[RMDB]
RNA sequence: GGGAACGACUCGAGUAGAGUCGAAAACCAAGCUGCGAUAAGCCUCAGGGACCCGCACGGAGGGGAAGAACUGAGGAUUUCCGAAUGGGAAUCCCCACCGCAAUUGCUUCGCGCAAUGGGGAACGCCCCUCAGUGUCGUGUUCGCACGACACUGAGGAAAAGAAACAACAACAACAAC
Reactivity to 2A3 in 0.01 (KOAc 150mM, MgCl2 10mM, bicine 150mM(pH8.5), 24C), signal-to-noise 3, nucleotides 027 to 126: c010c000a010a030g080c090u160g050c070g030a020u030a140a060g020c000c000u030c000a030g000g000g090a030c020c030c000g060c110a150c140g200g130a090g000g010g010g000a040a050g000a070a030c010u010g000a010g020g000a000u000u010u000c010c010g090a070a110u110g000g000g020a020a070u020c040c010c000c000a050c230c000g020c050a010a070u160u200g050c030u160u190c050g000c000g010c030a010a040u030g000g010g000g030a000a020c020g060c000c000
Reactivity to DMS in 0.01 (KOAc 150mM, MgCl2 10mM, bicine 150mM(pH8.5), 24C), signal-to-noise 1, nucleotides 027 to 126: c000c000a110a080g090c260u000g000c040g000a100u060a020a070g050c000c000u000c040a090g030g050g000a170c050c000c000g010c110a150c080g000g010a140g010g000g000g000a000a070g000a240a100c070u010g000a050g000g000a060u000u000u000c000c060g000a240a060u110g010g000g000a090a160u060c000c000c000c000a040c000c110g070c150a160a070u010u000g030c000u010u040c200g020c010g040c000a030a020u000g040g000g010g000a020a050c260g030c070c000
Structure probing data (2A3 and DMS) for a 177-nucleotide construct. Reactivities are given for positions 27 through 126. 2A3 is a SHAPE reagent: it acylates the 2'-hydroxyl of flexible nucleotides of all four kinds. For 2A3 the reverse transcriptase was SuperScript II with manganese. The RNA was probed in 150 mM KOAc, 10 mM MgCl2 and 150 mM bicine (pH 8.5) at 24 C. It was measured as part of the RMDB library RFM100.